[RMDB]
RNA sequence: GGGAACGACUCGAGUAGAGUCGAAAAUCGGGAACUUGUGGUGGCAGGACGAAAGUUGAUUUCCAUAAAGUGUUGCCCUCGCGUUCGUGUGGACCUCACAGAUGGUAACACUCACGCAGCUCCGGUAUCGGCCAUUAUCAUUCGUGAUAAUGGCCGAAAAAGAAACAACAACAACAAC
Reactivity to DMS in 0.01 (KOAc 150mM, MgCl2 10mM, bicine 150mM(pH8.5), 24C), signal-to-noise 1, nucleotides 027 to 126: u000c040g040g040g000a020a100c040u010u000g030u000g000g040u000g020g020c120a040g010g010a040c040g020a060a080a070g010u010u000g000a200u000u000u000c020c000a050u010a060a070a080g020u000g020u000u000g020c040c030c030u000c060g000c160g010u110u000c080g020u030g000u020g020g000a030c040c020u000c090a020c160a090g000a080u020g030g000u000a020a010c020a040c040u000c130a090c070g000c030a050g010c080u000c010c030g020g000u000a100
The record gives the reactivity of an RNA of 177 nucleotides to DMS. The RNA was probed in 150 mM KOAc, 10 mM MgCl2 and 150 mM bicine (pH 8.5) at 24 C. The data come from the RNA Mapping Database (RMDB), library OK2TST. For DMS, 1,067 sequencing reads were counted.